[RMDB]
The data come from the RNA Mapping Database (RMDB), library OK3TST.
The record gives the reactivity of an RNA of 207 nucleotides to 2A3 and DMS.
As a SHAPE reagent, 2A3 marks flexible, mostly unpaired nucleotides at the ribose 2'-OH.
Reactivities are given for positions 27 through 156.
RNA sequence: GGGAACGACUCGAGUAGAGUCGAAAACCUCCCACACCACUUUGCUAAGAGUCUGUUCUGUCUGCAAAAAUCCCAAAAGUUGUGUCAACUGGAACGCAAAAUGUUCUUCAUUUGACUUUCAUUGUUUUUUGGAAUUUUGGGGGGCCAGGGAGGAGCACGUGUGUAACGGAUUCGUCCGUUACACACGAAAAGAAACAACAACAACAAC
Reactivity to 2A3 in 0.01 (KOAc 150mM, MgCl2 10mM, bicine 150mM(pH8.5), 24C), signal-to-noise 1, nucleotides 027 to 156: c000c000u000c030c020c000a020c010a030c010c040a070c030u070u040u060g030c000u120a220a010g000a010g020u090c070u130g060u140u000c020u060g170u050c090u040g070c040a050a090a080a070a070u070c040c020c000a010a030a000a080g040u150u130g030u060g000u020c000a000a000c020u020g010g000a060a010c000g000c140a120a080a010a090u150g000u010u000c000u100u110c020a050u040u010u000g000a000c000u000u090u100c120a070u080u190g160u200u080u000u000u050u070g020g020a030a020u010u040u080u020g000g000g000g000g000g000c000c020a040g020g000g000a010g010g010a030g050c060a020
Reactivity to DMS in 0.01 (KOAc 150mM, MgCl2 10mM, bicine 150mM(pH8.5), 24C), signal-to-noise 1, nucleotides 027 to 156: c050c020u010c000c000c020a210c090a080c030c060a080c050u000u000u020g030c010u010a060a150g020a090g010u000c040u000g010u010u000c020u010g000u010c050u030g050c070a040a050a070a030a070u030c000c000c020a010a030a070a100g000u000u010g030u000g000u000c020a010a090c090u000g030g010a010a020c020g000c060a110a090a130a170u010g000u000u000c050u010u010c020a120u000u000u010g010a060c020u000u010u010c080a150u000u000g000u000u000u000u020u010u000g030g040a030a090u000u000u000u000g030g010g030g020g070g050c170c050a110g030g010g000a050g030g000a150g020c070a110
For DMS, 2,298 sequencing reads were counted.
The reactions ran in a buffer of 150 mM KOAc, 10 mM MgCl2 and 150 mM bicine (pH 8.5), at 24 C.